[RMDB]
RNA sequence: GGGAACGACUCGAGUAGAGUCGAAAAUGGGCCCCAUCGGUCUCGUCAUCGCCGCCGUCGUCGGCCUGGUCGUCCUGAUCGUCAAGUACUGGGACGAGAUUGUUUCCGCCACGGAAGCCGCGUGGGACUGGCUCGUCGAGACCGUCACCGGCGCUGGCUUUGCUGUUCCUUUCGAGGAACAGCAAAGAAAAGAAACAACAACAACAAC
Reactivity to 2A3 in 0.01 (KOAc 150mM, MgCl2 10mM, bicine 150mM(pH8.5), 24C), signal-to-noise 1, nucleotides 027 to 156: u080g040g060g000c030c000c000c050a040u070c000g000g000u000c030u000c000g000u010c010a130u200c100g000c000c000g010c000c020g050u290c030g150u130c020g000g000c000c040u040g090g000u070c000g000u000c000c090u040g100a050u100c020g030u040c180a090a000g100u290a170c110u170g000g000g020a010c000g000a000g000a040u000u170g070u090u230u030c100c020g020c090c070a090c050g000g020a060a060g000c000c000g110c010g000u120g110g140g000a200c150u200g000g000c000u040c200g000u000c000g000a000g000a000c000c000g000u010c000a000c000c010g090g010c050g010c050u000g020g020

An RNA of 207 nucleotides, treated with 2A3 and read out base by base. The 2A3 profile rests on 394 reads. For 2A3 the reverse transcriptase was SuperScript II with manganese. Values are in units of 0.01, from 0 to 300, in steps of 10. The data come from the RNA Mapping Database (RMDB), library OK3TST.